[RMDB]
RNA sequence: GGGAACGACUCGAGUAGAGUCGAAAAGAAAGAAAGAAAGAACUCUGUAAAGUGAGGGAUUGCCUGGACCAGGUCGGCGGGCCUGCUCCAGUUUCCUUUGCUCUGCUCAACGGGCAGACCGCCACAAAAAACGCGUGGCUGUUCGCAGCCACGCGAACCAUGUAAAUCGGUUCGCCGAUUUACAUGGAAAAGAAACAACAACAACAAC
Reactivity to 2A3 in 0.01 (KOAc 150mM, MgCl2 10mM, bicine 150mM(pH8.5), 24C), signal-to-noise 2, nucleotides 027 to 156: g030a010a090a010g030a040a060a030g090a060a120a010g060a040a020c040u050c060u130g100u240a180a100a090g070u050g020a020g000g050g010a050u060u150g060c000c000u000g000g000a010c030c000a000g000g020u040c070g020g060c040g020g000g000c000c010u000g010c010u000c000c020a010g020u020u060u020c000c010u040u050u130g020c010u020c000u030g020c000u010c070a080a090c080g030g010g010c010a010g000a050c000c000g020c000c010a020c050a020a130a020a030a010a000c010g000c020g000u000g000g030c000u010g020u050u090c220g010c100a010g000c000c000a000c000g030c000g000a000a000